[RMDB]
RNA sequence: GGGAACGACUCGAGUAGAGUCGAAAAGGGAGGUGAAUAGAGAUUUCUACUUUUAGUGGCAGUCAGCCGAAAAGUCUACCUGUGUGUCCGUCCAUUUAGUAAUUUCACCUCGGGGAUUACUAAAGCCAAUCACGGUAUGAUUCGUCAUACCGUGAUUAAAAGAAACAACAACAACAAC
Reactivity to DMS in 0.01 (KOAc 150mM, MgCl2 10mM, bicine 150mM(pH8.5), 24C), signal-to-noise 6, nucleotides 027 to 126: g000g010g000a060g000g010u000g010a090a070u010a050g000a140g010a130u020u010u000c030u000a050c040u010u020u020u020a070g010u030g000g030c030a080g010u030c120a130g020c040c040g010a050a040a050a090g010u000c040u000a090c020c010u000g000u010g010u010g010u010c030c020g000u010c060c070a110u000u000u000a010g000u000a010a010u000u010u000c020a060c050c040u020c060g000g000g000g000a010u000u000a010c010u000a020a020a040g000c160c140
Reactivity to 2A3 in 0.01 (KOAc 150mM, MgCl2 10mM, bicine 150mM(pH8.5), 24C), signal-to-noise 6, nucleotides 027 to 126: g090g040g030a040g030g040u070g070a090a050u120a080g100a020g030a040u090u140u030c020u030a080c000u020u090u080u120a090g030u120g050g000c020a020g030u110c040a010g040c010c020g010a010a070a010a010g020u000c020u030a060c020c010u040g020u010g010u010g020u070c000c040g020u030c020c000a010u020u010u000a010g000u010a010a020u010u030u060c070a090c080c030u050c040g020g000g000g000a000u010u010a000c010u040a010a060a040g030c040c020